[RMDB]
RNA sequence: GGGAACGACUCGAGUAGAGUCGAAAACUCAAUGUAGGGAAUAACAUUGAAUUGAUACAAAUACCUUUUUCGGUGUAGGGAAAAACACCGAAUUGAUACAAAUACCUUUCUCAAUGUAGGCAAUAACAAAACAGGCAUCGCUUCGGCGAUGCCUGAAGACAGUAGAUUGGUUCGCCAAUCUACUGUCAAAAGAAACAACAACAACAAC
Reactivity to 2A3 in 0.01 (KOAc 150mM, MgCl2 10mM, bicine 150mM(pH8.5), 24C), signal-to-noise 2, nucleotides 027 to 156: c010u000c000a010a010u100g020u090a120g050g100g130a040a110u090a100a080c000a000u010u000g010a050a060u080u110g050a090u150a230c060a020a160a000u170a160c010c000u000u000u000u000u000c010g000g000u000g000u010a010g050g050g010a000a260a120a000a000c000a010c020c000g010a010a000u000u000g000a000u020a030c020a020a100a020u060a010c010c040u000u170u060c040u010c030a050a060u120g000u040a040g040g000c020a040a100u080a130a080c050a040a070a070a030c010a040g000g060c020a000u000c000g070c030u020u100c130g010g000c000g000a000u000g000c000c000u000g000a000a010
Background: Structure probing data (2A3) for a 207-nucleotide construct. The 2A3 profile rests on 1,054 reads.